Annotation: Structure probing data (DMS and 2A3) for a 170-nucleotide construct. For 2A3 the reverse transcriptase was SuperScript II with manganese. It was measured as part of the RMDB library 15KLIB. Conditions: 150 mM KOAc, 10 mM MgCl2 and 150 mM bicine (pH 8.5), 24 C. The 2A3 profile rests on 59,733 reads. The DMS profile rests on 51,040 reads. DMS adducts were read by reverse transcription with MarathonRT.

RNA sequence: GGGAACGACUCGAGUAGAGUCGAAAAUUGAAGGUAAAACAGCCUGUGGGUGAAACACACCCACAGGGCCCACUGGGCGCUAGCACUAUGGUAUCACGGUACCUUUGUGCGCCUGUUUUACCGAAGGCCAGCAUUGUGUUCGCACAAUGCAAAAGAAACAACAACAACAAC
Reactivity to DMS in 0.01 (KOAc 150mM, MgCl2 10mM, bicine 150mM(pH8.5), 24C), signal-to-noise 6, nucleotides 027 to 129: u040u050g040a200a120g000g000u000a000a000a000a000c010a000g020c000c020u010g040u000g000g000g000u050g040a090a170a090c300a220c000a000c010c010c000a020c000a000g020g000g030c000c020c000a120c190u010g000g000g000c030g010c060u040a090g030c010a010c010u010a000u000g030g000u020a020u000c050a100c300g030g000u010a000c000c030u000u110u000g000u000g020c000g010c000c000u000g020u000u000u000u000a000c020c030g000a070a050g020g030c030c010a130
Reactivity to 2A3 in 0.01 (KOAc 150mM, MgCl2 10mM, bicine 150mM(pH8.5), 24C), signal-to-noise 8, nucleotides 027 to 129: u110u130g080a100a020g000g010u000a000a000a000a000c000a000g000c000c000u000g000u000g000g000g010u010g040a060a110a010c160a010c000a000c060c000c000a000c000a000g000g000g000c000c010c000a240c140u230g000g010g000c020g000c080u090a070g000c000a000c000u030a000u060g000g000u000a000u030c030a020c230g120g000u010a000c000c000u050u120u030g000u010g000c000g010c010c000u000g000u000u000u000u000a000c000c000g000a000a000g070g040c010c010a010